[RMDB]
RNA sequence: GGGAACGACUCGAGUAGAGUCGAAAAUGGAACCGCAGUUGGUUCCUCGGAACUAAACUCGUGGUUCCUGUGGUUCACACCUGACCUCCUGAGCAGAAAAGAAAAAAGAAGGCGGCUCGGAAGAGCGGAAAGUAGCUAUGUUCGCAUAGCUACUUUCAAAAGAAACAACAACAACAAC
Reactivity to 2A3 in 0.01 (KOAc 150mM, MgCl2 10mM, bicine 150mM(pH8.5), 24C), signal-to-noise 2, nucleotides 027 to 126: u040g010g000a000a030c010c010g000c030a020g000u040u030g030g000u000u000c000c000u000c070g080g010a030a000c010u140a260a070a000c010u070c140g020u010g020g010u000u010c000c000u000g040u030g000g010u080u060c050a060c030a030c060c000u040g060a060c000c010u020c000c000u010g000a030g000c070a020g150a100a170a060a000g170a040a160a030a050a010a000g050a040a010g070g000c070g040g000c020u000c020g050g050a110a010g000a000g020c060g010
Reactivity to DMS in 0.01 (KOAc 150mM, MgCl2 10mM, bicine 150mM(pH8.5), 24C), signal-to-noise 3, nucleotides 027 to 126: u000g020g010a010a000c000c010g030c000a040g020u000u000g000g010u000u000c000c020u010c300g000g010a030a010c000u010a050a020a030c000u010c160g050u000g010g000u000u000c000c000u010g020u000g000g010u010u010c130a110c100a070c060c070u000g010a060c030c020u010c010c010u020g000a080g000c040a050g010a060a050a070a130g020a010a060a080a080a050a050g000a110a080g000g020c060g000g020c020u010c020g020g030a070a090g000a040g020c030g010
Chemical mapping of a 177-nucleotide RNA with 2A3 and DMS. Reactivities are given for positions 27 through 126. For 2A3, 1,911 sequencing reads were counted. The RNA was probed in 150 mM KOAc, 10 mM MgCl2 and 150 mM bicine (pH 8.5) at 24 C.